[RMDB]
RNA sequence: GGGAACGACUCGAGUAGAGUCGAAAAGGGGCCGAUUAGGAUUCGACGCCGGUAGCGAAACUCUAGGUGCAUGCCGAGUUGGUAACAGAACUCGUAAAUCCACUGUUGCAACUUUCUAUAGUUGCCAAUGACGAAAACUACGAGGGCUACGCUCUCGCCAAUACUUAAAGUUCGCUUUAAGUAUUGGAAAAGAAACAACAACAACAAC
Reactivity to 2A3 in 0.01 (KOAc 150mM, MgCl2 10mM, bicine 150mM(pH8.5), 24C), signal-to-noise 4, nucleotides 027 to 156: g040g000g010g000c060c030g040a040u100u130a070g080g000a060u090u080c060g030a040c050g050c070c000g050g030u070a060g050c030g060a080a090a100c040u040c050u080a050g040g000u020g050c040a030u100g020c010c010g000a010g000u020u020g020g010u010a020a010c010a040g010a020a010c000u010c010g040u080a000a050a030u010c040c030a060c040u030g010u040u030g000c000a000a000c000u060u160u130c110u230a140u150a150g000u000u000g000c020c010a100a150u110g030a020c030g030a050a010a020a130c100u130a050c010g000a000g020g000g000c020u040a040c150g000c010u000c000u000c000g000
Reactivity to DMS in 0.01 (KOAc 150mM, MgCl2 10mM, bicine 150mM(pH8.5), 24C), signal-to-noise 1, nucleotides 027 to 156: g050g030g000g050c010c030g020a100u020u000a160g020g000a200u000u000c050g010a120c030g020c060c030g030g040u010a120g030c020g020a110a070a100c020u000c040u010a050g030g010u000g020c060a070u000g020c030c020g010a110g070u000u000g020g020u000a020a160c090a110g000a000a000c040u010c040g030u000a000a120a270u000c050c020a100c020u010g010u010u000g020c000a030a040c010u010u030u000c110u010a110u000a070g040u000u000g020c040c000a050a020u020g000a130c060g000a040a050a040a100c040u000a060c000g010a090g000g000g030c020u010a070c140g020c050u000c030u000c040g000